Description:
This 177-nucleotide RNA was probed chemically with 2A3 and DMS.
RNA sequence: GGGAACGACUCGAGUAGAGUCGAAAAGGAUUCGUAACGUGAUUAGCGAUAUCAGAAAAGAUGCUGAAGUACGCAUGGACAAAUGCGUAGAAGCGUUCAAAACCCAAAUCAGCAAAAUACGCACGGGCAAGUAGAUCGACUUCGGUCGAUCUACUUGAAAAGAAACAACAACAACAAC
Reactivity to 2A3 in 0.01 (KOAc 150mM, MgCl2 10mM, bicine 150mM(pH8.5), 24C), signal-to-noise 1, nucleotides 027 to 126: g030g030a010u050u160c070g000u040a050a060c050g030u110g070a230u150u030a070g020c010g000a010u000a050u220c030a010g230a040a070a010a000g070a020u050g000c010u050g030a070a040g100u020a000c010g000c020a020u040g050g010a020c060a120a290a020u000g000c000g000u000a000g090a130a020g000c000g000u000u020c040a070a000a070a120c020c010c030a050a060a020u120c010a010g170c040a090a100a050a050u050a040c050g000c010a020c000g000g050g040
Reactivity to DMS in 0.01 (KOAc 150mM, MgCl2 10mM, bicine 150mM(pH8.5), 24C), signal-to-noise 2, nucleotides 027 to 126: g010g010a030u010u000c010g030u010a140a160c110g020u000g000a150u020u010a240g010c110g010a020u010a060u000c020a090g000a120a110a080a120g000a020u000g030c010u000g000a030a080g020u000a010c000g000c010a020u000g000g030a140c290a090a130a020u000g010c000g020u000a040g000a190a040g000c020g000u010u010c110a090a010a070a120c010c000c000a070a070a100u000c140a040g040c130a050a020a100a140u020a080c140g020c050a040c030g010g000g000

Background: 2A3 adducts were read by reverse transcription with SuperScript II with manganese. Source: RMDB library OK2TST, as collected in RNAgym.